[RMDB]
RNA sequence: GGGAACGACUCGAGUAGAGUCGAAAAGAAGAGAAUAAAUAGAGGAGUCAGGGUUCGCACACGCUCCGCGAACCGACGGUAACACUGACUGUGGAGCGGAAAAGGCAGAUACGGGACUGCCAAAGAACCUACGGUACGGAUUCGUCCGUACCGUAGGAAAAGAAACAACAACAACAAC
Reactivity to 2A3 in 0.01 (KOAc 150mM, MgCl2 10mM, bicine 150mM(pH8.5), 24C), signal-to-noise 3, nucleotides 027 to 126: g080a040a030g100a010g070a040a080u210a120a110a040u250a030g100a030g110g040a040g010u030c010a010g000g110g000u000u000c000g010c000a030c030a030c080g050c000u010c010c000g000c000g000a010a010c010c010g000a020c020g060g040u030a100a000c030a010c090u020g060a020c010u110g080u160g120g000a000g000c000g010g000a040a110a000a020g000g020c010a000g010a040u140a220c070g020g010g040a030c030u000g000c000c000a000a000a040g010a010a030
Reactivity to DMS in 0.01 (KOAc 150mM, MgCl2 10mM, bicine 150mM(pH8.5), 24C), signal-to-noise 2, nucleotides 027 to 126: g000a050a090g000a160g030a070a100u000a010a100a060u000a090g000a070g030g010a220g000u000c000a000g060g010g000u000u010c000g020c030a110c040a130c030g000c020u000c000c050g000c030g000a050a000c020c000g060a120c120g030g020u000a000a050c130a300c050u030g000a150c100u020g010u040g030g000a050g060c030g000g000a090a110a020a150g000g000c000a000g000a110u070a090c200g000g000g000a180c020u060g000c000c000a020a080a090g000a060a230